An RNA of 207 nucleotides, treated with 2A3 and read out base by base.
RNA sequence: GGGAACGACUCGAGUAGAGUCGAAAAACGGUGCGGAAGUUCGAGCUUCCGUGAAACGCGAAAAUCGGACGGUGGCUGCAAGUCGCAUCGCAAAACCGCGGCAAGUGGAGUUAGCGAGAGGAGGCUGAAACCAUCCAACACUUCGGUGUUGGAUGAAGCUAUACGGCUGGUUCGCCAGCCGUAUAGCAAAAGAAACAACAACAACAAC
Reactivity to 2A3 in 0.01 (KOAc 150mM, MgCl2 10mM, bicine 150mM(pH8.5), 24C), signal-to-noise 1, nucleotides 027 to 156: a000c030g000g050u090g000c030g000g020a020a020g030u210u220c110g000a020g040c000u000u000c000c000g000u000g000a010a010a000c030g020c030g050a010a000a000a140u120c030g000g020a000c010g000g030u050g040g000c030u050g000c080a000a140g040u070c000g000c070a040u040c010g050c030a030a030a020a000c030c030g030c010g050g000c150a150a040g030u060g030g030a070g030u030u020a010g030c040g160a000g020a010g110g020a020g010g000c000u010g010a030a030a030c020c000a000u040c000c000a000a000c000a010c000u000u200c240g110g010u000g000u000u000g000g010a000u000g000a010a000
The reactions ran in a buffer of 150 mM KOAc, 10 mM MgCl2 and 150 mM bicine (pH 8.5), at 24 C. The data come from the RNA Mapping Database (RMDB), library M2RFPK. 2A3 adducts were read by reverse transcription with SuperScript II with manganese.